The record gives the reactivity of an RNA of 177 nucleotides to DMS.
Conditions: 150 mM KOAc, 10 mM MgCl2 and 150 mM bicine (pH 8.5), 24 C.

RNA sequence: GGGAACGACUCGAGUAGAGUCGAAAAUCCGAACAGGGCGCUGUAGUAGCACGCUCAAGACCCGAAGCGGAGUGAUCUAGCCAUGGGCAGGUUGAAGCGGAGGUAAGACUUCGUGGAGGACCGAACCCUAGGACAGUUCCUUCGGGAACUGUCCUAGAAAAGAAACAACAACAACAAC
Reactivity to DMS in 0.01 (KOAc 150mM, MgCl2 10mM, bicine 150mM(pH8.5), 24C), signal-to-noise 1, nucleotides 027 to 126: u010c000c010g020a020a130c220a220g000g010g000c040g010c160u000g040u000a140g000u000a220g010c070a040c040g030c010u000c060a090a080g010a290c070c000c030g020a050a260g000c070g000g000a030g020u000g000a110u000c030u030a170g000c020c050a080u030g000g000g020c020a200g010g000u050u000g000a290a300g000c000g000g000a000g000g000u000a140a160g000a300c000u000u000c010g050u000g030g030a220g000g000a010c000c020g000a060a150c060c040